Structure probing data (DMS and 2A3) for a 177-nucleotide construct. The DMS profile rests on 2,880 reads. 2A3 is a SHAPE reagent: it acylates the 2'-hydroxyl of flexible nucleotides of all four kinds. For DMS the reverse transcriptase was MarathonRT. Values cover nucleotides 27 to 126. The RNA was probed in 150 mM KOAc, 10 mM MgCl2 and 150 mM bicine (pH 8.5) at 24 C.
[RMDB]
RNA sequence: GGGAACGACUCGAGUAGAGUCGAAAAUCUAGUGCCUUCUGGUUAUUCACCCACAUUCCAAUGGCGGGUUUGGUACGAAUGUAUAAUUUGUUAGCAUGCCUUUGGCUUUUACGCAAGUUUUAUCAGCGUUAGGUUUACUGUUCGCAGUAAACCUAACAAAAGAAACAACAACAACAAC
Reactivity to DMS in 0.01 (KOAc 150mM, MgCl2 10mM, bicine 150mM(pH8.5), 24C), signal-to-noise 3, nucleotides 027 to 126: u000c050u000a090g010u000g020c030c020u000u000c100u000g030g000u010u000a080u010u010c170a210c010c010c020a100c140a080u000u010c080c080a080a060u000g010g010c040g020g000g000u000u000u000g010g020u000a000c020g010a050a030u010g000u020a080u000a070a040u000u000u000g010u000u000a080g010c070a040u000g010c020c000u000u000u010g010g030c130u000u000u000u010a070c120g000c070a060a090g000u000u000u010u000a090u020c110a120g000c250
Reactivity to 2A3 in 0.01 (KOAc 150mM, MgCl2 10mM, bicine 150mM(pH8.5), 24C), signal-to-noise 1, nucleotides 027 to 126: u000c010u020a060g060u020g060c030c000u090u070c050u070g000g060u070u090a060u160u170c020a040c060c060c000a000c020a030u120u000c040c010a020a050u020g010g020c000g030g000g020u100u090u070g070g030u000a000c030g020a060a050u040g080u040a100u000a220a070u010u040u100g030u030u010a020g030c010a000u050g010c000c000u060u010u050g020g000c000u060u050u040u050a050c070g010c040a070a110g000u020u050u020u080a250u080c070a020g000c000